Source information:
The record gives the reactivity of an RNA of 177 nucleotides to 2A3 and DMS. Conditions: 150 mM KOAc, 10 mM MgCl2 and 150 mM bicine (pH 8.5), 24 C. DMS adducts were read by reverse transcription with MarathonRT. It was measured as part of the RMDB library OK2TRN.
RNA sequence: GGGAACGACUCGAGUAGAGUCGAAAAUACCACUACGCUUCUCAGAGUAAAAUGUGAGGGCAGGAAGGCCUCUGGACAGGCGAGGCAGGGCAGGAGGUUGGCCAGAUGCCGGAGCUGGGUUGGUGAAGAUCUCCAGAUGAUUCGUCAUCUGGAGAUCAAAAGAAACAACAACAACAAC
Reactivity to 2A3 in 0.01 (KOAc 150mM, MgCl2 10mM, bicine 150mM(pH8.5), 24C), signal-to-noise 1, nucleotides 027 to 126: u050a010c010c010a040c030u100a050c060g040c010u180u150c030u050c050a080g000a000g150u140a030a080a110a100u300g030u040g060a080g030g050g000c040a010g070g070a040a050g040g000c030c000u020c010u040g010g070a050c070a080g000g120c030g000a050g000g000c040a020g030g090g000c070a030g030g020a040g000g000u060u090g040g000c030c000a010g000a050u130g040c000c010g000g020a000g000c030u040g080g000g000u070u060g000g000u000g050a080a010
Reactivity to DMS in 0.01 (KOAc 150mM, MgCl2 10mM, bicine 150mM(pH8.5), 24C), signal-to-noise 2, nucleotides 027 to 126: u010a150c020c040a180c080u010a090c120g020c010u010u000c020u020c020a070g010a100g010u000a090a080a120a100u000g010u000g010a080g010g000g010c030a090g000g000a100a060g010g020c030c010u010c030u000g020g010a090c100a030g010g010c030g010a100g000g030c060a080g010g000g000c060a080g010g000a080g010g030u000u010g020g040c020c030a020g000a100u000g010c060c050g000g000a110g020c040u010g000g000g010u010u000g020g000u010g010a080a070